[RMDB]
RNA sequence: GGGAACGACUCGAGUAGAGUCGAAAAAAGCGGCAUCCAACAUUUGUCACAGCCAUGCUCACCGCCACGGACCGUAAACCCCUGAACGGAGGGGCGUCAGCAGUAGCUAGUGGCAUCAGUUACUGCUGAACCAAAGAGGGUUCGCCCUCUUUGGUUCAAAAGAAACAACAACAACAAC
Reactivity to 2A3 in 0.01 (KOAc 150mM, MgCl2 10mM, bicine 150mM(pH8.5), 24C), signal-to-noise 3, nucleotides 027 to 126: a010a000g070c030g010g000c000a060u030c040c010a050a010c030a140u110u110u110g080u060c040a020c030a040g000c000c010a030u070g000c040u020c030a030c000c050g070c010c010a030c050g040g040a060c030c010g020u040a060a060a100c000c010c000c000u040g050a170a030c090g020g050a010g000g020g000g010c000g050u020c010a000g020c000a000g000u020a000g000c000u020a010g040u040g090g020c010a020u020c020a000g000u000u010a010c010u010g000c000u020
Reactivity to DMS in 0.01 (KOAc 150mM, MgCl2 10mM, bicine 150mM(pH8.5), 24C), signal-to-noise 3, nucleotides 027 to 126: a070a070g020c010g000g020c040a050u010c040c090a110a080c140a110u020u010u030g000u010c050a030c050a040g040c030c070a080u040g000c020u000c070a060c020c020g020c040c060a080c110g000g000a100c020c020g010u010a050a120a160c030c020c010c000u000g000a050a100c120g010g010a020g020g000g000g020c150g000u000c040a000g020c010a000g000u010a000g000c000u000a060g020u010g000g010c060a070u010c080a000g000u000u000a010c010u000g000c010u000
An RNA of 177 nucleotides, treated with 2A3 and DMS and read out base by base. It was measured as part of the RMDB libraries RFM100 and RFMREP. Values cover nucleotides 27 to 126. DMS adducts were read by reverse transcription with MarathonRT. For 2A3, 3,011 sequencing reads were counted. As a SHAPE reagent, 2A3 marks flexible, mostly unpaired nucleotides at the ribose 2'-OH.